Conditions: 150 mM KOAc, 10 mM MgCl2 and 150 mM bicine (pH 8.5), 24 C. Structure probing data (DMS and 2A3) for a 177-nucleotide construct.
RNA sequence: GGGAACGACUCGAGUAGAGUCGAAAAAUCAAUGCGUCUUUGACAUAAUGUGCCUGCCAAAGCGCAAGGGGACUUUGGCGUGUGGCAAUUCUUAAAACAUUGUCUAACAUGCUUGUUACCGUCAUUAUCGGACUGAUACUUUCGAGUAUCAGUCCGAAAAAGAAACAACAACAACAAC
Reactivity to DMS in 0.01 (KOAc 150mM, MgCl2 10mM, bicine 150mM(pH8.5), 24C), signal-to-noise 1, nucleotides 027 to 126: a050u060c190a050a040u000g020c000g000u000c000u010u000u000g000a020c000a040u050a030a150u040g000u000g030c200c020u000g010c000c030a000a000a020g080c050g000c070a050a080g000g000g000g000a130c100u030u000u000g010g000c000g100u000g000u000g000g010c000a030a040u020u000c070u010u070a100a180a120a070c250a030u000u000g000u000c000u050a090a000c020a000u000g000c000u000u000g000u000u010a070c000c030g020u000c200a020u050u000a030
Reactivity to 2A3 in 0.01 (KOAc 150mM, MgCl2 10mM, bicine 150mM(pH8.5), 24C), signal-to-noise 7, nucleotides 027 to 126: a000u110c040a030a080u130g000c020g080u060c030u010u000u060g010a010c020a040u240a110a090u290g070u130g110c010c010u000g000c000c000a010a000a020g040c100g050c140a060a050g030g010g010g030a040c000u050u030u050g010g010c020g030u090g000u030g000g000c000a000a060u090u070c060u150u300a060a080a020a020c040a030u020u020g000u000c000u010a020a020c000a010u020g010c000u010u070g040u070u080a180c040c020g070u110c050a120u010u190a060